[RMDB]
Structure probing data (2A3 and DMS) for a 177-nucleotide construct. The data come from the RNA Mapping Database (RMDB), library TTRDEL. DMS (dimethyl sulfate) methylates the pairing face of unpaired adenines and cytosines. DMS adducts were read by reverse transcription with MarathonRT.
RNA sequence: GGGAACGACUCGAGUAGAGUCGAAAAGAUAUGGAUUGCGAUAAGAGCAGAGGCGUCGGAAACGACGCUACCCACCUGCAUCUUUUGACGCAAUCCUAAGUCAAAGGUUGCUCUUCGGAGCAACCAACCUAAGCUAAUACUUCGGUAUUAGCUUAGGAAAAGAAACAACAACAACAAC
Reactivity to 2A3 in 0.01 (KOAc 150mM, MgCl2 10mM, bicine 150mM(pH8.5), 24C), signal-to-noise 7, nucleotides 027 to 126: g050a030u100a100u170g010g000a000u000u010g000c010g030a050u020a150a020g000a000g000c000a010g000a010g020g000c000g010u000c010g000g010a040a070a020c010g000a000c000g000c000u000a010c020c010c010a050c010c000u040g020c120a300u030c010u080u110u060u210g210a090c020g000c000a000a000u000c000c000u020a130a020g060u030c070a100a050a090g000g000u000u000g010c010u000c000u050u140c300g090g000a010g000c000a000a000c000c000a000a000
Reactivity to DMS in 0.01 (KOAc 150mM, MgCl2 10mM, bicine 150mM(pH8.5), 24C), signal-to-noise 7, nucleotides 027 to 126: g010a030u010a300u000g000g000a010u000u000g010c010g020a170u000a030a010g010a080g000c000a000g000a120g020g000c000g010u000c000g000g010a100a110a230c010g010a010c000g010c000u000a000c030c040c100a300c080c010u000g000c000a140u000c010u000u010u010u000g020a150c080g000c000a000a010u000c000c000u000a010a070g010u010c060a110a080a110g000g000u000u000g000c000u010c000u000u000c180g010g010a010g010c000a010a000c000c000a030a030